[RMDB]
RNA sequence: GGGAACGACUCGAGUAGAGUCGAAAAGAACCAUCCGGGAGCACACAGGGAUCCUUGGGUGUGUGUGGGAGGCAAGGAUGAGGGAGGGACCUAUUAAGCGGUAUAGGGACGCGGGAGAGGAUGGGAACCCAUUAGUAAACUUCGGUUUACUAAUGGGAAAAGAAACAACAACAACAAC
Reactivity to 2A3 in 0.01 (KOAc 150mM, MgCl2 10mM, bicine 150mM(pH8.5), 24C), signal-to-noise 9, nucleotides 027 to 126: g070a040a020c000c000a000u010c000c000g050g010g000a010g040c050a020c030a030c040a170g070g050g140a090u070c020c020u160u240g070g030g010u050g010u000g030u020g020u050g030g030g030a130g050g060c110a070a040g060g020a100u170g020a150g010g020g010a210g020g000g010a010c000c000u050a090u140u150a120a010g060c040g050g040u090a050u110a100g020g010g020a030c070g010c050g070g010g030a140g000a010g060g030a060u090g010g000g000a020a030